[RMDB]
Structure probing data (2A3 and DMS) for a 207-nucleotide construct. 2A3 adducts were read by reverse transcription with SuperScript II with manganese.

RNA sequence: GGGAACGACUCGAGUAGAGUCGAAAAGAUAUGGACACCUGUGCCUUCGGGAACAGCUCAUUACGCGAAGAACUCUUUCGGAAACGAAAGAGGGAGCGUAGGGAGCUGAAGGGUGUCCUAAGUCAAACCAACAAUACUCUUCGGAGUAUUGUUGGAAUCAAUUGGUGUUCUUCGGAACACCAAUUGAAAAAGAAACAACAACAACAAC
Reactivity to 2A3 in 0.01 (KOAc 150mM, MgCl2 10mM, bicine 150mM(pH8.5), 24C), signal-to-noise 2, nucleotides 027 to 156: g020a000u060a030u090g010g010a000c000a000c000c000u020g090u210g090c020c010u050u050c290g050g000g010a080a060c010a000g000c010u000c000a040u000u020a000c000g030c010g120a240a080g020a090a030c000u000c000u000u010u000c010g040g020a100a050a060c010g000a000a000a000g000a010g000g010g020a020g000c010g010u000a000g020g030g000a000g000c000u010g000a000a020g020g000g000u000g000u000c000c000u000a070a010g010u020c020a040a010a120c000c000a000a000c000a000a000u000a000c000u010c020u040u170c300g130g000a000g000u000a000u000u000g000u000u000g000g000a000a070
Reactivity to DMS in 0.01 (KOAc 150mM, MgCl2 10mM, bicine 150mM(pH8.5), 24C), signal-to-noise 1, nucleotides 027 to 156: g020a130u000a200u000g010g050a000c010a030c010c000u000g000u030g000c000c060u000u030c300g060g030g000a040a300c020a040g000c000u000c000a120u000u000a010c000g000c000g010a170a300g000a090a130c010u000c000u000u000u000c020g020g000a050a100a300c020g020a030a010a000g010a010g000g050g000a180g020c010g010u020a000g000g020g030a010g030c000u000g000a060a190g000g000g000u010g010u000c000c000u000a000a090g030u000c080a160a090a270c010c000a030a030c020a020a010u000a000c010u000c010u010u000c300g000g000a040g030u000a000u000u000g000u000u020g000g000a040a050
Source: RMDB library RNAMAK, as collected in RNAgym.
The reactions ran in a buffer of 150 mM KOAc, 10 mM MgCl2 and 150 mM bicine (pH 8.5), at 24 C.
The DMS profile rests on 2,106 reads.
For DMS the reverse transcriptase was MarathonRT.